Source information: Structure probing data (2A3 and DMS) for a 177-nucleotide construct. For 2A3, 6,298 sequencing reads were counted. For 2A3 the reverse transcriptase was SuperScript II with manganese.
RNA sequence: GGGAACGACUCGAGUAGAGUCGAAAAGAUAUGGAGAUGAAAUGACAUGUCCCAUGAUCGGAAACGAUCAUGUGGACAACAGCAUUCAUCUCCUAAGUCAAAAUCAAUCAGCUUCGGCUGAUUGAAACGUUUUAUUUUUCUUCGGAAAAAUAAAACGAAAAGAAACAACAACAACAAC
Reactivity to 2A3 in 0.01 (KOAc 150mM, MgCl2 10mM, bicine 150mM(pH8.5), 24C), signal-to-noise 3, nucleotides 027 to 126: g000a010u020a000u050g020g000a010g010a000u020g040a030a110a100u040g020a030c190a300u300g020u000c000c000c000a010u000g010a000u000c000g000g000a040a000a000c000g000a000u010c010a000u020g050u220g010g000a000c010a010a000c020a010g020c000a000u000u010c000a000u020c000u040c000c010u000a000a000g000u000c000a010a040a000a300u030c010a010a000u000c000a010g000c010u120u210c300g280g000c000u010g000a010u010u010g000a010a010a000
Reactivity to DMS in 0.01 (KOAc 150mM, MgCl2 10mM, bicine 150mM(pH8.5), 24C), signal-to-noise 3, nucleotides 027 to 126: g000a010u000a040u010g000g000a010g000a000u000g000a020a020a040u000g020a020c050a300u020g020u000c000c000c000a010u010g000a010u010c000g010g000a020a010a030c010g010a010u000c000a000u000g000u020g020g010a030c010a050a030c210a120g000c010a030u010u000c000a000u000c000u000c000c000u000a000a050g000u000c010a100a110a140a160u000c000a020a010u010c010a000g020c010u000u010c240g030g000c010u000g000a010u000u010g000a010a090a140